[RMDB]
RNA sequence: GGGAACGACUCGAGUAGAGUCGAAAACAGAAUAUCUCAGCUGGAGAACUCCUUAGACUCCUAAGUCUUACCUCAUGAACUUGUAUCUUUAAGUUAUGGCUUCUAUAAACAGAAAGAUAACGUUGAGGGUAUAAGUGACAUUCGUGUCACUUAUACCAAAAGAAACAACAACAACAAC
Reactivity to 2A3 in 0.01 (KOAc 150mM, MgCl2 10mM, bicine 150mM(pH8.5), 24C), signal-to-noise 4, nucleotides 027 to 126: c040a010g120a110a080u080a190u090c010u000c020a060g000c040u100g030g020a040g000a100a080c030u080c030c000u020u050a030g030a060c000u010c000c030u030a080a030g040u000c020u030u060a080c010c010u100c020a090u100g060a060a040c040u040u100g030u070a050u030c020u030u080u080a100a030g020u020u030a040u060g050g030c030u110u000c020u090a120u110a120a160a020c040a020g100a060a060a010g010a010u050a030a040c040g060u070u100g050a070g000
Reactivity to DMS in 0.01 (KOAc 150mM, MgCl2 10mM, bicine 150mM(pH8.5), 24C), signal-to-noise 4, nucleotides 027 to 126: c090a090g000a110a080u010a090u000c040u010c050a120g010c110u010g020g010a080g020a070a110c050u000c040c020u000u000a110g010a060c010u010c080c050u010a080a100g010u000c020u000u000a160c040c020u000c060a110u000g000a070a080c140u000u010g010u010a010u000c000u010u010u000a070a100g010u000u000a030u000g010g000c120u000u010c030u000a090u010a070a050a090c100a050g010a090a020a020g010a070u000a030a040c080g010u000u010g020a090g020
The record gives the reactivity of an RNA of 177 nucleotides to 2A3 and DMS. For 2A3, 3,455 sequencing reads were counted. For DMS, 2,541 sequencing reads were counted. 2A3 adducts were read by reverse transcription with SuperScript II with manganese. Values cover nucleotides 27 to 126.